Structure probing data (DMS and 2A3) for a 177-nucleotide construct. 2A3 is a SHAPE reagent: it acylates the 2'-hydroxyl of flexible nucleotides of all four kinds. The 2A3 profile rests on 830 reads. The RNA was probed in 150 mM KOAc, 10 mM MgCl2 and 150 mM bicine (pH 8.5) at 24 C. The data come from the RNA Mapping Database (RMDB), library RFM100.
[RMDB]
RNA sequence: GGGAACGACUCGAGUAGAGUCGAAAAGUAGACCUUGUCUGACUGUGUUCAUAGCCAGGCAGGGGGGACAGUGUAUGCAAGAGUUAAUUUGGAGUUCUUGCCAGCUGUAGCCAGCUGAAUCAGUAGCCCCCGCAAAGAAUUUCGAUUCUUUGCGGGGAAAAGAAACAACAACAACAAC
Reactivity to DMS in 0.01 (KOAc 150mM, MgCl2 10mM, bicine 150mM(pH8.5), 24C), signal-to-noise 1, nucleotides 027 to 126: g070u000a080g000a210c000c020u010u000g000u000c000u000g000a080c000u000g050u080g020u060u060c150a030u010a020g010c020c000a030g000g020c000a040g000g000g000g000g010g020a000c030a040g000u010g020u050a080u010g040c040a000a010g000a020g000u030u010a050a130u100u020u020g000g010a140g010u000u000c000u000u000g010c050c070a160g040c010u000g000u030a130g000c200c000a050g000c000u010g000a110a120u060c070a120g020u000a170g020c120
Reactivity to 2A3 in 0.01 (KOAc 150mM, MgCl2 10mM, bicine 150mM(pH8.5), 24C), signal-to-noise 2, nucleotides 027 to 126: g060u040a010g080a090c010c000u000u000g000u000c000u000g000a030c000u040g000u010g030u070u300c130a080u110a040g000c000c000a020g000g020c010a000g010g000g010g000g010g000a000c000a080g010u000g010u090a080u200g000c010a010a010g000a000g000u080u170a250a180u170u060u280g200g020a090g050u030u010c000u000u000g000c040c000a020g000c000u080g000u160a080g110c000c000a060g000c040u090g070a100a090u130c000a060g030u060a000g030c000